[RMDB]
RNA sequence: GGGAACGACUCGAGUAGAGUCGAAAAAAGAUAUGGAUUUGAGGGAGACGAAGUACUUCGUUUGACGAAGCUCGGAAACGAGCUUCCGAGAAGUACCUGCGUCGAGGAUCUCAAAUCCUAAGUCAAAUCCUAGAAUCUUCUUCGGAAGAUUCUAGGAAAAAGAAACAACAACAACAAC
Reactivity to DMS in 0.01 (KOAc 150mM, MgCl2 10mM, bicine 150mM(pH8.5), 24C), signal-to-noise 2, nucleotides 027 to 126: a070a160g000a050u000a300u000g000g000a010u010u000u010g010a030g010g010g000a040g020a020c010g030a190a140g010u000a010c020u000u000c000g010u010u000u030g040a300c300g000a070a010g000c000u000c000g030g000a110a120a190c010g010a010g000c020u000u020c000c010g000a070g000a020a000g010u000a000c000c070u010g030c000g040u010c000g000a060g010g000a010u000c000u010c000a020a000a000u000c000c000u000a020a080g020u000c030a120a150a140
Chemical mapping of a 177-nucleotide RNA with DMS.
The reactions ran in a buffer of 150 mM KOAc, 10 mM MgCl2 and 150 mM bicine (pH 8.5), at 24 C.
DMS adducts were read by reverse transcription with MarathonRT.